[RMDB]
RNA sequence: GGGAACGACUCGAGUAGAGUCGAAAAGGGAUUUUCUUCCUCGAGUUUCUUGAUGGUCUUCCUGGUCUUCCGGAGAUCUUUCUCGAGCUCCUCCGCCUUUUUCCUUGCUGUGAUCCAUUUCUCGAGGUAAACCCUAGGUUCGCCUAGGGUAAAAGAAACAACAACAACAAC
Reactivity to 2A3 in 0.01 (KOAc 150mM, MgCl2 10mM, bicine 150mM(pH8.5), 24C), signal-to-noise 9, nucleotides 027 to 129: g050g010g010a020u060u060u020u020c020u060u030c000c000u000c010g020a030g010u070u130u030c050u060u100g050a090u130g030g030u010c010u110u080c030c030u060g050g030u100c060u200u040c060c020g010g000a040g020a070u010c000u020u060u010c040u010c020g020a030g000c010u040c010c000u010c010c010g020c010c000u050u080u010u040u040c020c000u040u090g040c050u060g050u080g080a070u040c030c010a050u040u070u040c010u010c000g020a030g020g010u040a110a070
Reactivity to DMS in 0.01 (KOAc 150mM, MgCl2 10mM, bicine 150mM(pH8.5), 24C), signal-to-noise 9, nucleotides 027 to 129: g030g030g020a110u020u010u020u020c060u030u020c020c010u000c060g020a070g030u010u000u010c050u010u000g020a120u020g010g000u000c050u030u030c040c030u040g020g020u040c060u030u040c050c050g000g000a080g000a040u020c020u010u020u000c050u000c050g020a050g000c060u010c030c020u000c010c010g010c020c030u010u010u000u000u010c030c020u000u000g020c030u030g030u030g000a050u040c040c040a080u010u020u020c010u000c020g000a060g000g020u030a040a090